[RMDB]
RNA sequence: GGGAACGACUCGAGUAGAGUCGAAAAGAUAUGGAUGCAAUCAACAGCCAUGAGGUCGGAAACGACCUAUGGACAUGGAUGCAUCCUAAGUCAAAGUGAUUGCGUGACUUCGGUCACGCAAUCACAACAGUACGGUCUUGUUCGCAAGACCGUACUGAAAAGAAACAACAACAACAAC
Reactivity to DMS in 0.01 (KOAc 150mM, MgCl2 10mM, bicine 150mM(pH8.5), 24C), signal-to-noise 2, nucleotides 027 to 126: g020a010u010a270u010g000g000a000u000g000c010a020a300u000c000a050a110c200a130g020c010c000a000u000g010a000g000g010u000c010g010g010a040a060a110c000g020a000c000c000u000a000u000g000g010a100c220a200u020g000g000a030u000g010c020a000u000c000c000u010a000a030g010u000c030a130a110a080g020u000g000a010u000u000g000c000g020u000g000a050c000u000u010c220g020g000u000c000a000c010g020c000a000a010u000c000a000c000a000a090
Reactivity to 2A3 in 0.01 (KOAc 150mM, MgCl2 10mM, bicine 150mM(pH8.5), 24C), signal-to-noise 1, nucleotides 027 to 126: g040a020u040a030u110g000g000a010u010g000c020a110a230u040c020a050a270c050a070g010c010c000a020u220g300a020g000g020u000c030g020g000a040a040a060c030g000a010c010c000u020a000u000g010g000a080c040a080u080g010g010a000u010g000c010a010u000c010c000u010a020a010g060u030c010a080a100a050g030u000g020a020u020u010g000c010g000u000g000a030c050u120u150c300g050g010u000c000a000c000g030c010a000a030u000c000a000c010a000a000
Notes:
An RNA of 177 nucleotides, treated with DMS and 2A3 and read out base by base. The data come from the RNA Mapping Database (RMDB), library TTRDEL. The DMS profile rests on 1,293 reads.